RNA sequence: GGGAACGACUCGAGUAGAGUCGAAAAGGGUACACGCCUGCAAAUCACUGCACCUCAGUUGGAGGAGGGGACGAUUGCAACGCCAUUCGAGAUUCGCCCCCUGGGUAUGACGACCAUGUAUUGCCAGAGAUUCUUCGAGACGAAUUCGGACACACAGGACAGAUCUAAACUUCGGUUUAGAUCUGUCAAAAGAAACAACAACAACAAC
Reactivity to 2A3 in 0.01 (KOAc 150mM, MgCl2 10mM, bicine 150mM(pH8.5), 24C), signal-to-noise 3, nucleotides 027 to 156: g020g020g070u070a010c090a020c110g060c000c020u030g040c050a030a080a090u130c090a070c130u050g000c050a070c020c030u010c030a150g070u130u150g110g020a030g000g030a000g020g000g000g000a000c010g010a020u050u140g090c090a060a060c080g000c090c050a040u110u120c050g020a050g000a200u080u020c020g000c000c000c000c040c010u000g060g000g000u090a110u090g040a030c040g000a010c020c040a040u040g040u070a070u020u130g080c000c010a030g020a000g000a130u080u010c000u040u110c060g060a010g020a060c060g020a070a090u090u040c020g010g000a010c020a010c030a000c050a130g150
Reactivity to DMS in 0.01 (KOAc 150mM, MgCl2 10mM, bicine 150mM(pH8.5), 24C), signal-to-noise 2, nucleotides 027 to 156: g020g010g000u000a070c050a050c050g040c020c010u020g010c050a020a140a160u000c040a080c120u000g030c000a110c020c000u000c050a130g010u000u000g040g000a110g040g000a050g020g010g010g000a040c010g000a140u000u000g060c080a090a130c080g000c140c150a130u000u010c040g030a130g000a240u000u000c000g000c000c010c000c000c030u000g010g020g030u000a030u010g010a100c070g000a080c040c040a080u000g010u010a110u010u000g000c040c020a150g030a190g020a170u000u000c030u000u030c030g010a230g030a110c060g000a060a160u000u000c010g000g020a110c050a090c050a070c090a200g020